[RMDB]
RNA sequence: GGGAACGACUCGAGUAGAGUCGAAAAUUGCAGGCGUGUCCAUACUUAGCACAAUGACUAAUCGCCAGUACCAUCAGAAAAUGCUUAAGUCCAUGGCUGCAACUCGUGGAGCGACUUGCGUCAUUGGGUCCGUAACAAAGUUCGCUUUGUUACGGACAAAAGAAACAACAACAACAAC
Reactivity to DMS in 0.01 (KOAc 150mM, MgCl2 10mM, bicine 150mM(pH8.5), 24C), signal-to-noise 1, nucleotides 027 to 126: u000u000g000c060a010g000g020c040g040u020g000u030c060c050a100u010a080c110u010u000a070g010c040a070c100a040a130u000g000a040c110u000a100a040u000c060g040c010c030a080g000u010a140c050c040a060u000c120a100g000a080a040a080a080u000g000c010u000u000a060a030g010u000c020c030a020u010g000g010c000u000g010c020a010a040c080u030c080g010u000g030g010a260g000c040g000a000c090u010u000g020c030g000u000c030a000u010u010g030g010
Reactivity to 2A3 in 0.01 (KOAc 150mM, MgCl2 10mM, bicine 150mM(pH8.5), 24C), signal-to-noise 2, nucleotides 027 to 126: u080u070g010c010a020g040g000c030g040u060g060u010c040c010a050u040a100c010u030u010a020g000c020a030c070a070a140u110g000a030c010u090a040a030u090c000g010c020c010a000g000u000a050c030c020a010u070c000a030g110a020a060a020a050u110g000c030u110u080a040a040g030u060c050c040a060u040g030g020c040u070g000c020a030a030c010u000c050g000u040g110g030a050g060c010g030a050c030u010u060g000c000g000u000c010a040u010u090g100g000